[RMDB]
The record gives the reactivity of an RNA of 207 nucleotides to 2A3.
2A3 adducts were read by reverse transcription with SuperScript II with manganese.

RNA sequence: GGGAACGACUCGAGUAGAGUCGAAAAUAUUAUUAGCAAGCUACGGUAGAAUCUUGUCUAGUGAUUUUACAAGAGAUUGAUAGACUCGCUUGAUUUGGGCUUGAGUUAUGUGUCAAAAUCAAGUUAAAACAAUACAUAGCCUAUGGUUGUAGACAAAACAACCAUUCUACUUCGGUAGAAUGGUUGUAAAAGAAACAACAACAACAAC
Reactivity to 2A3 in 0.01 (KOAc 150mM, MgCl2 10mM, bicine 150mM(pH8.5), 24C), signal-to-noise 2, nucleotides 027 to 156: u110a010u090u080a030u040u110a050g060c060a130a010g030c040u070a030c020g040g020u040a020g060a030a020u020c010u050u300g020u060c040u000a010g000u020g040a020u000u080u050u070a020c050a070a010g030a020g030a130u080u300g090a040u050a080g000a000c000u020c000g010c000u010u000g000a000u040u000u000g010g010g000c000u030u010g040a030g050u030u000a020u040g010u000g000u010c000a030a000a000a000u010c000a000a020g020u040u030a000a040a000a030c040a000a040u060a090c000a000u010a010g000c030c000u080a120u180g090g000u010u020g010u030a040g000a110c010a010a070a010

Reactivities are given for positions 27 through 156. The reactions ran in a buffer of 150 mM KOAc, 10 mM MgCl2 and 150 mM bicine (pH 8.5), at 24 C.